Record summary: The record gives the reactivity of an RNA of 177 nucleotides to DMS and 2A3. Source: RMDB library OK2TRN, as collected in RNAgym. 2A3 adducts were read by reverse transcription with SuperScript II with manganese. For DMS, 28,325 sequencing reads were counted.
RNA sequence: GGGAACGACUCGAGUAGAGUCGAAAAUUGACACCUUGGUUAUGGAGGCCAAGAGUGAUCUUAUGGAACCGCCACUCAGGACAAACUGAUUUUGAUGUUACUCUCUCAGAAGUGGCAUGUGUGGCAAAUCUUUCUCAUUUUUCGAAAUGAGAAAGAUAAAAGAAACAACAACAACAAC
Reactivity to DMS in 0.01 (KOAc 150mM, MgCl2 10mM, bicine 150mM(pH8.5), 24C), signal-to-noise 9, nucleotides 027 to 126: u010u000g010a040c010a010c010c000u000u000g000g020u000u010a300u020g010g010a230g010g000c010c000a010a010g000a140g030u000g000a090u000c010u000u000a080u000g010g000a150a160c070c050g010c010c000a010c010u000c010a040g010g010a100c090a040a070a170c030u010g000a050u000u000u000u000g010a070u000g010u010u010a100c140u000c040u000c170u000c080a040g010a120a080g010u000g000g000c010a030u000g010u000g010u000g000g000c020a070a090
Reactivity to 2A3 in 0.01 (KOAc 150mM, MgCl2 10mM, bicine 150mM(pH8.5), 24C), signal-to-noise 7, nucleotides 027 to 126: u050u040g010a000c000a000c000c000u000u010g030g010u090u080a220u300g280g110a140g150g000c010c000a000a010g080a060g020u010g080a200u000c010u080u100a170u090g070g040a050a050c020c030g000c000c010a000c000u010c010a020g040g030a090c060a060a180a090c050u020g040a070u090u070u120u180g020a020u020g020u080u060a060c020u010c000u010c010u010c050a080g010a220a020g140u010g020g000c010a010u010g020u000g000u000g000g000c010a090a030